[RMDB]
RNA sequence: GGGAACGACUCGAGUAGAGUCGAAAACUGCAUUAGAUCCUAACAAGAGAGUCAACCUGCCCUUUGAAGCUUUAAAGCCAGGCAUUGACUUCUCUCUAGCUAUGAGAAUCCUAGAUAGCAUCUUCUUCCAACUACACUGAAAAUCUGUGGUUUAGUAGUGAUAAAAUGAGUUCGCUCAUUUUAUCACAAAAGAAACAACAACAACAAC
Reactivity to DMS in 0.01 (KOAc 150mM, MgCl2 10mM, bicine 150mM(pH8.5), 24C), signal-to-noise 2, nucleotides 027 to 156: c040u000g030c030a160u010u000a070g030a080u010c030c030u010a100a100c090a130a050g010a050g000a100g030u010c010a030a080c020c080u000g030c100c010c040u000u010u020g010a080a140g020c040u020u000u010a060a060a110g020c210c050a090g000g030c030a140u000u030g000a050c020u020u000c000u000c000u010c070u000a070g000c030u000a080u020g000a130g000a100a060u000c020c020u000a090g050a130u000a110g000c000a280u000c010u000u000c050u010u000c030c030a050a060c010u010a050c010a030c050u000g000a110a080a080a090u010c070u000g030u020g010g000u000u000u000a080g000u000a170
Reactivity to 2A3 in 0.01 (KOAc 150mM, MgCl2 10mM, bicine 150mM(pH8.5), 24C), signal-to-noise 7, nucleotides 027 to 156: c030u050g020c000a040u060u100a050g020a110u070c010c020u040a070a050c050a080a010g010a000g000a000g010u010c000a020a020c030c060u030g010c020c020c030u110u070u140g140a130a050g030c030u080u190u300a200a120a010g010c020c010a010g010g000c030a040u010u030g000a000c000u190u050c010u020c000u000c010u030a020g000c010u020a040u100g040a030g070a140a060u080c020c010u040a070g030a150u040a030g040c010a050u040c030u130u000c010u080u040c040c010a030a020c020u060a020c040a020c050u100g080a050a030a090a150u110c060u030g030u020g040g000u020u020u020a030g020u020a020

This 207-nucleotide RNA was probed chemically with DMS and 2A3. Reactivities are given for positions 27 through 156. The data come from the RNA Mapping Database (RMDB), library OK3TST.